[RMDB]
Overview:
An RNA of 177 nucleotides, treated with 2A3 and DMS and read out base by base. Source: RMDB library TTRDEL, as collected in RNAgym. For DMS the reverse transcriptase was MarathonRT. As a SHAPE reagent, 2A3 marks flexible, mostly unpaired nucleotides at the ribose 2'-OH. For 2A3 the reverse transcriptase was SuperScript II with manganese.
RNA sequence: GGGAACGACUCGAGUAGAGUCGAAAAGAUAUGGAAUAUCCACACAUCAGGCUUUCUCGGAAACGAGGGCCGACGACGUGUGGAGUAUUCCUAAGUCAAAAGCCCUGAACGUUCGCGUUCAGGGCAAGUAAGAUUCGUUGUUCGCAACGAAUCUUACAAAAGAAACAACAACAACAAC
Reactivity to 2A3 in 0.01 (KOAc 150mM, MgCl2 10mM, bicine 150mM(pH8.5), 24C), signal-to-noise 1, nucleotides 027 to 126: g000a010u060a040u170g010g020a030a010u020a010u000c020c000a000c000a000c010a090u110c050a070g000g000c020u200u300u180c010u100c000g020g020a050a090a070c000g000a030g000g000g000c000c000g000a040c040g070a020c060g000u000g000u000g000g010a010g000u000a000u000u000c000c010u000a050a010g050u020c020a000a000a140a140g000c000c050c000u000g000a020a020c020g050u170u110c300g050c020g120u000u000c030a000g050g010g000c010a010a000
Reactivity to DMS in 0.01 (KOAc 150mM, MgCl2 10mM, bicine 150mM(pH8.5), 24C), signal-to-noise 2, nucleotides 027 to 126: g030a020u010a300u000g000g020a020a000u000a030u000c000c000a010c000a030c010a060u010c020a170g020g010c010u000u000u030c000u010c010g000g000a090a090a180c000g010a000g040g010g000c000c000g000a080c270g000a000c050g020u000g000u010g000g000a040g000u000a000u010u010c000c000u000a040a180g010u010c040a060a080a180a160g010c020c000c010u010g000a000a010c000g040u030u010c260g020c000g030u000u000c000a000g010g010g000c010a000a010